Structure probing data (2A3 and DMS) for a 177-nucleotide construct.
Conditions: 150 mM KOAc, 10 mM MgCl2 and 150 mM bicine (pH 8.5), 24 C.
DMS adducts were read by reverse transcription with MarathonRT.
The 2A3 profile rests on 1,118 reads.
RNA sequence: GGGAACGACUCGAGUAGAGUCGAAAAUCGCGCGCCCCCGAGGGCGUAGACGACUUUGGCGGUUGAAGCGUCGCCCACCGGAGAGGGGGACGGAGGUGGCCCAGGAGCCCACGGGUACGCGGGUUCGCGGUUCGCAUCUAUUCGUAGAUGCGAACCGAAAAGAAACAACAACAACAAC
Reactivity to 2A3 in 0.01 (KOAc 150mM, MgCl2 10mM, bicine 150mM(pH8.5), 24C), signal-to-noise 1, nucleotides 027 to 126: u090c000g050c000g000c030g070c050c010c030c000c060g040a190g000g030g000c040g000u040a110g040a040c030g180a280c000u060u100u070g110g040c080g110g080u060u140g090a080a030g040c000g020u000c020g030c010c040c000a130c080c050g060g110a120g060a120g070g020g000g000g010a000c000g010g020a110g020g010u080g020g000c000c010c000a030g060g070a010g000c030c000c000a040c020g010g000g100u120a050c030g030c000g080g000g000u030u050c030g000
Reactivity to DMS in 0.01 (KOAc 150mM, MgCl2 10mM, bicine 150mM(pH8.5), 24C), signal-to-noise 1, nucleotides 027 to 126: u010c020g020c030g000c070g010c010c010c010c060c060g000a140g010g010g020c050g020u000a030g010a100c000g000a080c020u010u000u010g030g030c050g000g000u010u020g000a060a090g000c000g000u000c010g000c010c010c010a100c070c040g000g010a160g010a190g010g000g000g040g000a060c050g000g010a160g000g000u000g000g010c010c010c020a120g000g000a120g010c020c000c000a040c020g010g000g020u000a020c040g020c020g010g010g010u000u010c040g010
Reactivities are rounded to 0.1 and cut off at 0 and 3. Values cover nucleotides 27 to 126.